[RMDB]
RNA sequence: GGGAACGACUCGAGUAGAGUCGAAAAGACGUGGAGGUUUCGCGCCCUCCUUUGCGCGUAAGUACGUCGAAAUUCGGUGCUUUGGAUCGCACCGUAUGAUCCAUUAGAUAUCCGCUCUGUGCCGCGGUUGGGCAUUUACACUUACCCGAAAGGGGAACCUACGACGACGAUUCGUCGUCGUCGUAGGAAAAGAAACAACAACAACAAC
Reactivity to DMS in 0.01 (KOAc 150mM, MgCl2 10mM, bicine 150mM(pH8.5), 24C), signal-to-noise 2, nucleotides 027 to 156: g010a080c030g040u000g000g000a120g000g010u000u000u020c100g050c050g000c160c070c070u010c070c060u000u010u000g060c010g000c040g000u010a070a090g040u020a060c020g030u000c010g000a070a110a140u000u000c000g010g060u020g020c040u000u020u010g010g030a180u000c220g010c020a180c010c040g020u010a010u000g010a060u000c030c010a110u000u000a240g010a140u000a070u000c030c010g030c030u000c040u000g020u000g020c000c040g000c060g010g000u000u000g010g010g060c060a110u000u000u000a130c080a040c070u000u000a190c000c020c010g000a050a100a160g050g020g000g000a090a070
Reactivity to 2A3 in 0.01 (KOAc 150mM, MgCl2 10mM, bicine 150mM(pH8.5), 24C), signal-to-noise 3, nucleotides 027 to 156: g030a010c010g000u050g030g070a100g070g100u070u090u120c020g000c010g020c020c010c000u060c040c000u080u050u110g010c010g000c010g030u030a090a090g020u030a020c030g000u030c010g010a040a020a050u090u050c010g000g000u020g000c000u050u120u230g080g060a060u160c000g010c030a040c020c040g000u010a050u050g030a050u010c020c030a060u090u080a040g060a070u130a030u060c030c020g020c030u000c030u090g070u080g070c040c050g050c030g000g000u020u050g040g000g030c030a020u060u060u150a060c080a020c030u090u090a060c010c000c000g100a060a010a010g020g000g000g010a010a040